[RMDB]
RNA sequence: GGGAACGACUCGAGUAGAGUCGAAAAGGCCUAAUGCCUUAUGCUAUGCAUUUUUUGCCGAAAGUGUUUCCUGCUAUAUCAAUUAGAGGAAAGUGGGCAGUUGGGUUAAGCUUAUUCUGUUUUCUCCUGUAUGGUAGUAUUUCGAUACUACCAUACAAAAAGAAACAACAACAACAAC
Reactivity to DMS in 0.01 (KOAc 150mM, MgCl2 10mM, bicine 150mM(pH8.5), 24C), signal-to-noise 9, nucleotides 027 to 126: g010g010c000c030u010a050a060u010g010c000c010u000u020a060u020g010c040u000a110u030g010c010a010u000u000u010u020u020u010g020c060c250g010a060a080a060g020u010g010u000u000u000c000c000u000g010c020u000a030u000a300u030c230a110a080u010u000a020g010a060g000g000a010a060a070g020u010g000g010g000c010a020g010u010u000g010g010g000u000u010a060a110g010c100u010u010a090u010u010c090u010g010u010u000u000u000c020u000c110c300
Reactivity to 2A3 in 0.01 (KOAc 150mM, MgCl2 10mM, bicine 150mM(pH8.5), 24C), signal-to-noise 9, nucleotides 027 to 126: g060g000c010c010u030a040a010u050g030c000c010u110u130a070u140g030c030u060a050u180g010c020a080u020u030u050u070u200u160g070c030c030g120a110a060a030g040u040g050u030u030u020c020c000u050g250c020u050a030u010a030u180c110a160a170u100u020a020g010a000g030g030a020a020a020g040u120g010g020g000c010a030g090u100u130g020g010g010u030u050a050a020g020c020u070u090a080u270u070c050u040g050u050u030u040u030c020u010c020c020
Source: RMDB libraries RFM100 and RFMREP, as collected in RNAgym. This 177-nucleotide RNA was probed chemically with DMS and 2A3. The reactions ran in a buffer of 150 mM KOAc, 10 mM MgCl2 and 150 mM bicine (pH 8.5), at 24 C. High 2A3 reactivity points to a flexible backbone, as in loops and unpaired stretches.